Source: RMDB library OK2TST, as collected in RNAgym. An RNA of 177 nucleotides, treated with DMS and read out base by base. DMS adducts were read by reverse transcription with MarathonRT.
RNA sequence: GGGAACGACUCGAGUAGAGUCGAAAAGACGUACAGAUUAAAGAGCGCGUGGAGGAGGUAAUGCUUGAACAUCGCCUCAACGGGAUCCGCAUUACUCCCGAAUUUAGCCGAUCUUACCCCCAAGGCGGAAGGGGAUGUACUUCGGUACAUCCCCUUCAAAAGAAACAACAACAACAAC
Reactivity to DMS in 0.01 (KOAc 150mM, MgCl2 10mM, bicine 150mM(pH8.5), 24C), signal-to-noise 1, nucleotides 027 to 126: g010a120c110g060u000a090c150a070g010a060u000u000a110a150a170g030a060g000c080g060c140g060u000g010g000a060g000g000a000g010g050u000a000a070u000g030c000u000u030g000a080a140c190a010u000c090g020c010c000u000c170a070a180c080g030g000g060a000u000c080c270g010c020a090u020u000a050c010u000c000c000c000g040a280a100u000u000u010a150g020c010c080g000a070u000c010u000u020a190c010c010c000c000c050a070a120g020g080c130g000

The RNA was probed in 150 mM KOAc, 10 mM MgCl2 and 150 mM bicine (pH 8.5) at 24 C.